[RMDB]
RNA sequence: GGGAACGACUCGAGUAGAGUCGAAAAGGAGGAAGGGCCCACCGAACAGCUGUUCUCCUCGCCGAAGCAUGCGGAAACCGCCCGAUACGUCGCCGGACUGUCGGGGGACGUCAAGGACGCCAAGCGCGGAUGAUUCCAUGUUCGCAUGGAAUCAUCCAAAAGAAACAACAACAACAAC
Reactivity to 2A3 in 0.01 (KOAc 150mM, MgCl2 10mM, bicine 150mM(pH8.5), 24C), signal-to-noise 1, nucleotides 027 to 126: g020g030a010g000g060a100a070g050g080g040c050c020c010a030c000c030g040a040a030c000a000g040c000u060g070u070u000c040u000c010c030u030c030g000c000c000g010a020a000g090c060a050u150g040c050g020g000a100a040a050c020c030g090c050c000c000g010a010u040a090c200g000u000c020g010c170c070g120g130a080c030u040g000u020c010g060g030g020g000g000a010c010g030u080c050a090a020g070g030a020c000g030c020c020a080a020g030c080g070c050
Reactivity to DMS in 0.01 (KOAc 150mM, MgCl2 10mM, bicine 150mM(pH8.5), 24C), signal-to-noise 1, nucleotides 027 to 126: g000g010a020g000g000a110a160g030g000g010c010c030c040a060c130c070g030a140a050c140a160g000c030u000g030u000u010c020u000c010c070u000c050g000c040c010g000a090a080g010c070a130u000g030c090g000g000a050a100a110c090c040g000c030c000c000g000a090u000a020c150g020u000c000g000c140c110g020g000a060c050u030g050u000c000g010g030g000g010g000a040c050g000u000c110a070a140g030g000a030c030g000c020c030a070a080g000c120g000c170
Structure probing data (2A3 and DMS) for a 177-nucleotide construct. Reactivities are given for positions 27 through 126. The 2A3 profile rests on 1,112 reads. The data come from the RNA Mapping Database (RMDB), library OK2TRN. 2A3 adducts were read by reverse transcription with SuperScript II with manganese.